This 207-nucleotide RNA was probed chemically with 2A3. It was measured as part of the RMDB library ARCHII. The reactions ran in a buffer of 150 mM KOAc, 10 mM MgCl2 and 150 mM bicine (pH 8.5), at 24 C. 2A3 adducts were read by reverse transcription with SuperScript II with manganese.

RNA sequence: GGGAACGACUCGAGUAGAGUCGAAAACUGCGUGAGUUAAUCUCCUUUUGGAGCUGGACUGAUUAGAAUUUCUAGCGUUUUAAUCGCUCCAUAACCUUAAGCUAGACGCUUUUAAAAGGUGGUUCGCCUUUUAAACUAAGAAACAAGAACUCUUGAAUCAUCCUAAGAGGUUCGCCUCUUAGGAUGAAAAAGAAACAACAACAACAAC
Reactivity to 2A3 in 0.01 (KOAc 150mM, MgCl2 10mM, bicine 150mM(pH8.5), 24C), signal-to-noise 1, nucleotides 027 to 156: c080u180g060c040g090u160g040a130g040u040u090a120a090u080c020u040c010c050u110u090u090u300g040g010a040g000c080u060g030g000a010c020u040g000a000u010u030a000g010a010a000u080u110u020c030u010a010g000c020g010u010u010u000u000a000a040u000c020g060c080u000c020c010a100u180a160a140c000c030u210u100a070a000g030c010u000a010g000a060c000g000c000u000u020u030u070a010a010a010a000g010g000u010g020g050u010u020c030g010c000c000u010u000u020u040a000a010a000c010u030a080a000g090a080a170a040c060a090a080g000a000a000c020u010c010u080u060g040a100a120